[RMDB]
RNA sequence: GGGAACGACUCGAGUAGAGUCGAAAAAACAUGUCAUCCUGAAAGCCAGAUGAUGGCCCUCAGUUAUCAUCGGGAAGAUAGAUUGAAGGCGAGGUAGUUAUAGAUGAAGUGUCAUCAUGAAUUGGAAACCCCUACACGGUUUCGACCGUGUAGGGGUAAAAGAAACAACAACAACAAC
Reactivity to DMS in 0.01 (KOAc 150mM, MgCl2 10mM, bicine 150mM(pH8.5), 24C), signal-to-noise 1, nucleotides 027 to 126: a070a050c100a010u030g000u010c080a040u010c050c030u020g020a100a050a070g000c070c030a070g030a030u020g020a020u010g010g000c010c020c030u010c150a100g020u010u010a010u000c030a060u000c030g010g000g040a060a020g020a190u000a070g010a130u000u010g010a030a070g000g020c010g010a050g020g020u000a080g030u000u000a150u000a090g000a000u000g010a070a070g030u000g000u000c010a030u000c030a010u000g010a040a150u010u040g020g000a110a110